[RMDB]
RNA sequence: GGGAACGACUCGAGUAGAGUCGAAAAAAAGAUAUGGACGUAUCGAGUUCGUGCAUAUCCGUUGAAACAGGCUCGGAAACGAGCCUGUGGAGGAUAUGCGAACUAAGACAGUACGUCCUAAGUCAAAGCAAAUAGAGUACUUCGGUACUCUAUUUGCAAAAGAAACAACAACAACAAC
Reactivity to DMS in 0.01 (KOAc 150mM, MgCl2 10mM, bicine 150mM(pH8.5), 24C), signal-to-noise 3, nucleotides 027 to 126: a060a050a080g000a040u000a300u000g000g000a020c000g010u010a020u000c140g010a070g040u000u000c010g040u020g000c010a010u000a010u010c000c000g020u020u020g000a300a160a020c000a010g020g000c000u000c020g050g000a070a070a120c000g020a010g020c010c000u000g000u000g030g000a060g010g010a010u000a000u000g020c000g030a020a000c050u010a120a130g020a150c300a100g020u000a010c010g010u000c000c000u000a010a110g000u010c050a080a160a140
Reactivity to 2A3 in 0.01 (KOAc 150mM, MgCl2 10mM, bicine 150mM(pH8.5), 24C), signal-to-noise 1, nucleotides 027 to 126: a000a000a010g020a000u050a010u080g010g000a010c020g000u000a010u220c110g030a050g100u080u140c080g040u180g000c000a010u000a000u000c000c020g190u260u070g030a000a000a000c010a000g000g000c010u000c020g040g000a080a080a020c020g000a000g000c050c000u010g000u010g000g000a010g000g000a000u000a000u010g000c000g000a020a000c010u040a100a030g110a040c040a030g060u000a000c000g020u000c000c000u010a070a020g040u040c030a150a110a050
Structure probing data (DMS and 2A3) for a 177-nucleotide construct. The reactions ran in a buffer of 150 mM KOAc, 10 mM MgCl2 and 150 mM bicine (pH 8.5), at 24 C. Values cover nucleotides 27 to 126.